Chemical mapping of a 207-nucleotide RNA with 2A3 and DMS. DMS adducts were read by reverse transcription with MarathonRT. For DMS, 1,739 sequencing reads were counted. Conditions: 150 mM KOAc, 10 mM MgCl2 and 150 mM bicine (pH 8.5), 24 C.
RNA sequence: GGGAACGACUCGAGUAGAGUCGAAAACUGGAAAGGUCAUUAGCAAAAUAGCCAACGGAAAGAAAUGGAAAGGGAGAAUACUUACUCGAACAUAUUCAAACCAGCACCAACUACAGAUAUAAAGACAGUGAGUUAAUAAUCCGUACUAGCCCCGCUGCCAGCAAUAUAUUUUCGAAUAUAUUGCUGGAAAAGAAACAACAACAACAAC
Reactivity to 2A3 in 0.01 (KOAc 150mM, MgCl2 10mM, bicine 150mM(pH8.5), 24C), signal-to-noise 2, nucleotides 027 to 156: c040u050g000g070a040a030a060g060g000u040c030a060u060u070a020g000c020a060a100a110a100u130a070g010c000c040a030a010c040g000g000a100a080a030g030a030a120a000u120g010g010a090a050a040g080g030g020a070g040a040a010u020a040c030u110u040a020c020u030c060g040a070a030c030a040u160a130u090u080c060a050a130a150c020c020a020g010c020a010c020c020a040a020c010u070a030c020a070g030a050u050a010u040a290a150a000g050a010c020a030g040u030g060a010g020u070u020a010a040u060a080a030u050c010c020g050u040a080c020u030a040g030c000c000c020c010g030c000u050g030
Reactivity to DMS in 0.01 (KOAc 150mM, MgCl2 10mM, bicine 150mM(pH8.5), 24C), signal-to-noise 1, nucleotides 027 to 156: c040u000g020g010a100a170a100g010g000u000c040a080u000u000a090g060c000a050a040a050a120u000a110g000c080c040a030a100c070g000g020a060a060a090g030a100a040a090u000g000g000a030a000a140g000g000g000a190g000a040a130u000a020c080u020u000a060c050u000c070g040a050a120c090a110u000a060u020u000c080a090a070a120c020c020a100g050c020a130c040c040a020a040c050u000a060c050a080g010a050u010a050u000a070a010a120g010a130c020a050g010u020g010a040g030u000u010a040a100u000a040a080u000c000c020g010u020a080c080u000a100g010c000c010c000c000g000c190u000g010
For 2A3 the reverse transcriptase was SuperScript II with manganese.
The data come from the RNA Mapping Database (RMDB), library OK3TST.